[RMDB]
RNA sequence: GGGAACGACUCGAGUAGAGUCGAAAAUGGUGGUGGGCACCUAUAGUCCCAGCUACUUGGGAGGCUGAGGCAGCAGAAUCGCUUGGACCUGGGAGGCGGCGGUUGCAGUGAGCCGAGAUUGUGCCACUGCACCCCAGCCUGGGUGACAGAGUGAGACACAAUCACAAAGGUUCGCCUUUGUGAUUGUAAAAGAAACAACAACAACAAC
Reactivity to DMS in 0.01 (KOAc 150mM, MgCl2 10mM, bicine 150mM(pH8.5), 24C), signal-to-noise 1, nucleotides 027 to 156: u000g020g060u000g010g010u000g010g020g030c030a010c080c030u000a110u000a090g000u000c010c000c010a100g000c000u010a050c060u000u010g000g000g020a090g010g040c040u020g010a080g000g030c020a120g020c050a090g000a020a100u000c030g050c080u000u000g000g010a070c000c030u000g030g010g000a070g070g030c070g010g030c030g000g000u000u000g010c010a040g030u000g010a150g040c060c020g000a150g030a250u000u010g020u000g030c000c000a050c020u000g030c010a010c020c020c030c010a060g010c040c020u010g000g000g020u000g010a070c050a090g020a130g000u000g000a070g000a200c250
Reactivity to 2A3 in 0.01 (KOAc 150mM, MgCl2 10mM, bicine 150mM(pH8.5), 24C), signal-to-noise 2, nucleotides 027 to 156: u080g070g010u070g040g080u200g020g030g000c040a050c050c030u060a080u070a100g060u040c010c000c000a000g010c030u150a120c050u110u130g030g000g030a030g000g000c030u000g010a040g020g000c030a050g030c040a020g130a100a060u040c050g000c050u030u050g000g000a000c000c000u010g030g030g010a060g010g130c060g020g020c110g050g010u190u090g000c000a000g010u010g020a040g040c020c000g080a060g030a100u100u210g090u180g030c000c000a000c000u000g000c000a000c000c010c000c000a040g010c000c000u000g000g000g020u020g000a050c030a040g090a000g020u050g020a000g060a010c020